[RMDB]
RNA sequence: GGGAACGACUCGAGUAGAGUCGAAAAUUAAUGAUUCGUUUUGGUUCUGAACGUUUACAGAAAAUGAUGAGCCGACUAGGUUUAGAUGACUCUACACCAAUUGAAUCAAAAAUGGUAUCAAGAGCUGGGACGUAUUACUGUUCGCAGUAAUACGUCCAAAAGAAACAACAACAACAAC
Reactivity to DMS in 0.01 (KOAc 150mM, MgCl2 10mM, bicine 150mM(pH8.5), 24C), signal-to-noise 2, nucleotides 027 to 126: u030u040a050a190u000g000a030u000u010c030g010u000u020u030u000g000g060u010u020c020u030g000a110a090c210g000u050u010u020a050c050a110g000a080a040a090a070u030g000a050u000g000a080g030c000c030g000a140c150u000a090g010g030u000u000u000a040g020a100u010g010a110c050u020c130u000a060c070a050c060c030a050a090u010u010g000a010a020u020c030a000a000a040a050a030u030g000g020u000a100u010c030a010a040g000a060g000c070u040g000
Reactivity to 2A3 in 0.01 (KOAc 150mM, MgCl2 10mM, bicine 150mM(pH8.5), 24C), signal-to-noise 4, nucleotides 027 to 126: u080u040a050a050u060g080a020u030u000c010g080u010u010u030u090g060g000u080u010c030u030g020a050a020c050g050u020u030u110a100c120a050g150a050a090a080a050u190g070a050u020g010a000g040c020c010g080a080c090u170a040g070g000u020u030u060a020g000a110u130g090a090c050u000c000u050a020c020a000c080c000a000a050u060u090g010a010a020u050c000a010a000a030a080a050u120g040g050u120a060u160c070a070a030g030a010g180c040u080g030